An RNA of 207 nucleotides, treated with 2A3 and DMS and read out base by base. The reactions ran in a buffer of 150 mM KOAc, 10 mM MgCl2 and 150 mM bicine (pH 8.5), at 24 C. For 2A3, 1,452 sequencing reads were counted. For 2A3 the reverse transcriptase was SuperScript II with manganese. DMS adducts were read by reverse transcription with MarathonRT. For DMS, 2,742 sequencing reads were counted.
RNA sequence: GGGAACGACUCGAGUAGAGUCGAAAAGUCCAUCUACUACAUGGAUGACAGCCAUCGCCGCGUGAUUGAGGAAAACCCGAAACUCGACCGCGUGGAGAACUACGAGUCAAUGAACAUUGAUUACGUGGUGGAAGACUACGCCGCCGGUUGUCUGGUGGCAUUUAAUGCGGUUCGCCGCAUUAAAUGCAAAAGAAACAACAACAACAAC
Reactivity to 2A3 in 0.01 (KOAc 150mM, MgCl2 10mM, bicine 150mM(pH8.5), 24C), signal-to-noise 2, nucleotides 027 to 156: g030u040c030c010a020u000c060u190a230c040u070a080c040a070u050g040g010a010u040g020a020c010a060g050c020c000a070u130c040g030c040c000g000c020g020u040g050a210u040u020g010a020g050g050a070a010a000a100c010c060c030g040a120a060a020c050u040c040g020a020c020c000g000c000g010u000g000g010a050g050a050a010c050u040a010c010g020a000g010u010c010a010a020u080g120a120a070c090a230u040u020g010a010u010u070a060c000g020u010g000g000u030g040g060a120a020g010a050c040u080a050c040g040c040c010g020c020c020g010g020u060u070g070u030c050u010g000g000u030g040
Reactivity to DMS in 0.01 (KOAc 150mM, MgCl2 10mM, bicine 150mM(pH8.5), 24C), signal-to-noise 2, nucleotides 027 to 156: g030u000c000c000a080u000c010u000a120c050u000a110c080a240u000g060g030a030u010g000a140c060a060g020c000c030a160u000c050g010c010c020g000c030g040u020g000a070u000u010g000a040g020g000a120a050a080a260c020c050c040g020a120a080a190c010u020c000g010a010c000c030g030c010g020u000g030g010a090g000a110a080c040u000a010c010g000a120g010u000c000a000a020u000g000a120a110c170a080u000u000g020a060u000u000a100c010g020u000g060g030u000g000g000a120a140g010a100c010u000a030c050g010c000c010g060c000c020g000g020u000u010g030u000c050u000g020g010u020g000